An RNA of 207 nucleotides, treated with DMS and 2A3 and read out base by base.

RNA sequence: GGGAACGACUCGAGUAGAGUCGAAAAGGAACUCUUCUGUUUCAUUGGCAGCCACCAUUCUGUUUUCUGUCUCUCUGAAUCUGACUACUUCAGAAACCUCAUAUAAAUGGAAUUGCACAGUAUUGUCUUUUUGUGACUGGCUUAGUUCACUUAGCAACCAUUUACCUACGUUCGCGUAGGUAAAUGGAAAAGAAACAACAACAACAAC
Reactivity to DMS in 0.01 (KOAc 150mM, MgCl2 10mM, bicine 150mM(pH8.5), 24C), signal-to-noise 2, nucleotides 027 to 156: g000g080a060a070c060u000c130u000u000c070u010g030u010u010u020c040a130u000u010g030g000c050a070g000c030c020a080c080c030a090u020u000c020u010g020u000u000u000u000c070u000g000u020c000u000c040u000c020u020g010a030a130u010c020u000g000a150c070u000a090c090u000u000c020a130g030a100a070a080c050c020u000c030a080u010a130u000a050a060a110u000g020g020a060a120u000u000g030c030a120c080a080g010u000a060u020u000g040u010c010u000u010u020u010u000g040u010g000a040c040u010g010g070c040u000u000a100g010u000u010c050a030c040u000u000a130g030c090a160a150
Reactivity to 2A3 in 0.01 (KOAc 150mM, MgCl2 10mM, bicine 150mM(pH8.5), 24C), signal-to-noise 5, nucleotides 027 to 156: g050g010a070a050c030u030c020u180u040c060u100g030u030u040u030c070a090u120u170g010g010c000a010g030c010c030a030c030c010a060u070u030c040u040g110u030u050u050u010c030u050g080u030c020u000c010u000c010u100g030a080a060u030c020u030g050a070c040u100a060c020u080u030c010a020g020a110a140a100c020c030u080c080a060u140a010u070a200a130a060u060g030g010a020a060u080u090g010c070a030c020a070g070u080a140u100u090g060u070c000u040u120u020u050u110g050u020g030a030c020u020g030g080c030u050u080a030g030u120u070c030a030c050u040u090a020g040c010a030a060